[RMDB]
RNA sequence: GGGAACGACUCGAGUAGAGUCGAAAAAUCCGAUCGUCGCUGAAGCGCCACGCCCCCUCGCCCGGAGCUUCUCUCUGGCUACUACCCGGUGGAUACAACUGAAGCUUCAACCCCAAACCGCUUUUCUUAUAUCUUCACUGCUCUCCGGGCGAGGGUGACGAUCCUUAAAGUUCGCUUUAAGGAUCGUAAAAGAAACAACAACAACAAC
Reactivity to 2A3 in 0.01 (KOAc 150mM, MgCl2 10mM, bicine 150mM(pH8.5), 24C), signal-to-noise 1, nucleotides 027 to 156: a000u020c050c000g030a140u040c020g070u010c030g000c070u180g050a200a040g050c050g080c160c100a080c080g090c020c010c000c000c000u010c010g040c010c010c040g000g000a020g000c050u140u030c020u020c010u000c010u090g030g020c030u100a050c010u030a000c040c010c020g000g010u020g000g050a050u050a050c010a020a000c080u040g030a060a000g020c020u110u100c030a030a090c000c020c000c010a020a030a050c050c010g060c110u140u110u070u050c040u140u190a070u040a100u270c030u030u040c050a030c090u050g040c010u030c000u000c040c020g000g000g000c000g000a000g000g000g000u000g000
Reactivity to DMS in 0.01 (KOAc 150mM, MgCl2 10mM, bicine 150mM(pH8.5), 24C), signal-to-noise 1, nucleotides 027 to 156: a030u030c020c010g040a080u000c070g000u000c050g060c040u000g030a140a170g030c100g000c100c080a070c100g030c010c080c000c000c000u010c040g080c030c020c000g000g020a020g010c180u010u000c020u000c040u030c090u020g000g020c050u000a080c050u000a110c000c000c020g020g050u000g030g000a160u010a050c060a090a140c030u000g020a100a080g040c030u000u000c080a070a190c050c050c020c030a030a130a130c100c080g030c040u010u000u010u000c030u020u000a090u000a110u000c010u000u000c030a110c060u000g000c060u000c020u000c010c020g010g050g030c030g020a000g020g000g000u000g010
Source information:
The record gives the reactivity of an RNA of 207 nucleotides to 2A3 and DMS. 2A3 adducts were read by reverse transcription with SuperScript II with manganese. It was measured as part of the RMDB library VIROID. For 2A3, 698 sequencing reads were counted. Reactivities are given for positions 27 through 156.